The record gives the reactivity of an RNA of 177 nucleotides to DMS and 2A3.
The RNA was probed in 150 mM KOAc, 10 mM MgCl2 and 150 mM bicine (pH 8.5) at 24 C.
2A3 adducts were read by reverse transcription with SuperScript II with manganese.
DMS adducts were read by reverse transcription with MarathonRT.
Reactivities are given for positions 27 through 126.
For 2A3, 2,112 sequencing reads were counted.
It was measured as part of the RMDB library OK2TST.

RNA sequence: GGGAACGACUCGAGUAGAGUCGAAAAUGGCCUCGCUGGCGCCAGGGGUGCGUAGCACCUCCAGCGUUUCCUCGAUGGACGCCAGGUCAUCGGCCGAGAUCAAUACCGCCGCCGGAUGACCGUGCCGGUGUCCGCAUGAAUUCGUUCAUGCGGACACAAAAGAAACAACAACAACAAC
Reactivity to DMS in 0.01 (KOAc 150mM, MgCl2 10mM, bicine 150mM(pH8.5), 24C), signal-to-noise 3, nucleotides 027 to 126: u020g030g010c010c050u000c090g030c160u000g000g010c080g000c000c070a190g010g020g000g000u000g020c010g020u030a130g020c000a030c040c000u000c000c070a100g000c040g010u000u000u000c030c020u000c100g000a090u010g010g020a040c100g020c030c010a080g000g010u000c020a010u000c020g010g010c010c050g000a050g000a080u010c210a130a090u000a170c100c010g010c100c230g000c000c010g040g000a070u000g010a020c030c020g030u010g010c080c040g010
Reactivity to 2A3 in 0.01 (KOAc 150mM, MgCl2 10mM, bicine 150mM(pH8.5), 24C), signal-to-noise 2, nucleotides 027 to 126: u060g000g000c000c020u030c040g010c050u010g030g000c000g010c010c000a040g010g030g000g000u010g010c080g200u120a090g010c010a020c000c000u030c000c000a020g000c000g000u010u100u030c010c020u040c060g080a080u160g030g030a060c040g020c010c010a040g010g000u000c010a010u000c000g000g020c010c040g040a080g000a070u220c090a120a070u050a220c020c020g110c080c040g000c030c020g160g050a030u020g010a010c000c010g020u030g040c040c030g040